[RMDB]
RNA sequence: GGGAACGACUCGAGUAGAGUCGAAAACGCGUUGUCACCCUACAAACAAACUCUGCAAACAUCCUCGGAAGCAUCGCCCAUCUCUGCAACAUGCGUAACAAUUACAAAGCCUUGAUUGACAGCAACACUCAACGGGUGCUUUCGAGCACCCGUUGAGAAAAGAAACAACAACAACAAC
Reactivity to 2A3 in 0.01 (KOAc 150mM, MgCl2 10mM, bicine 150mM(pH8.5), 24C), signal-to-noise 1, nucleotides 027 to 126: c010g040c190g010u010u040g130u130c060a040c000c000c000u030a040c070a160a100a000c030a010a070a030c040u000c000u090g000c000a030a030a030c000a130u060c000c020u020c060g040g000a000a140g000c000a000u060c050g020c000c000c000a040u000c020u000c010u070g000c000a050a050c020a110u010g000c040g060u000a140a070c030a210a060u130u190a070c080a000a120a070g000c000c080u090u020g040a130u140u030g000a140c000a030g000c000a030a030c000a010